RNA sequence: GGGAACGACUCGAGUAGAGUCGAAAAUGUCAUUGUUAAAUGCAUCAGUAGCUUGAAUCCUCACUAUAGGGAAUGGCUGAAGCAUUAGGAUGAAAGCCUUCCCAGGGACUUUCAAACCCCGUCACUCGACAUCAUGUCGAUUCGUCGACAUGAUGUCAAAAGAAACAACAACAACAAC
Reactivity to DMS in 0.01 (KOAc 150mM, MgCl2 10mM, bicine 150mM(pH8.5), 24C), signal-to-noise 3, nucleotides 027 to 126: u010g010u010c080a070u000u000g010u010u000a050a040a050u000g000c020a070u020c050a070g000u010a100g020c100u020u000g000a060a070u000c010c020u000c170a080c170u010a160u000a130g030g000g000a030a060u010g030g010c000u000g000a060a090g010c000a100u000u010a080g010g040a100u000g010a090a020a010g000c020c030u000u000c000c010c010a130g000g000g010a070c100u000u000u000c060a010a100a200c100c020c010c040g000u000c130a030c150u010c150
Reactivity to 2A3 in 0.01 (KOAc 150mM, MgCl2 10mM, bicine 150mM(pH8.5), 24C), signal-to-noise 3, nucleotides 027 to 126: u140g040u070c040a050u090u040g070u110u250a090a100a030u070g000c010a050u050c070a030g100u090a030g070c060u070u090g070a090a040u080c000c020u060c020a120c070u170a110u180a220g000g000g040a030a040u080g040g000c020u010g040a040a010g010c010a020u090u120a090g120g050a020u090g050a020a030a000g000c000c020u000u000c010c000c000a000g000g010g000a030c020u070u200u050c110a030a060a190c010c020c030c020g060u080c040a060c050u080c040